[RMDB]
RNA sequence: GGGAACGACUCGAGUAGAGUCGAAAAGCUCGGAGACGAGCAAGGCUGACAAAACUUUGUCCCAACCUCCACGUGGUGUCGGCUGGAUAAUGCUGCAUUAUGUUGCAUUUAUCAACUGGGAAUUAAAGGAUGAUCCUCCAUUCGUGGAGGAUCAUCCAAAAGAAACAACAACAACAAC
Reactivity to 2A3 in 0.01 (KOAc 150mM, MgCl2 10mM, bicine 150mM(pH8.5), 24C), signal-to-noise 3, nucleotides 027 to 126: g000c000u000c000g000g010a170g030a050c020g000a000g000c000a000a100g030g000c010u000g000a010c020a020a060a030a090c040u170u060u170g030u000c010c000c000a010a010c030c010u080c020c010a110c080g070u060g030g000u000g030u040c010g000g010c030u020g000g010a000u020a020a000u020g000c000u000g010c010a160u080u140a160u300g040u040u020g040c030a030u130u070u080a030u020c020a020a000c070u050g140g020g000a050a000u260u120a090a050a060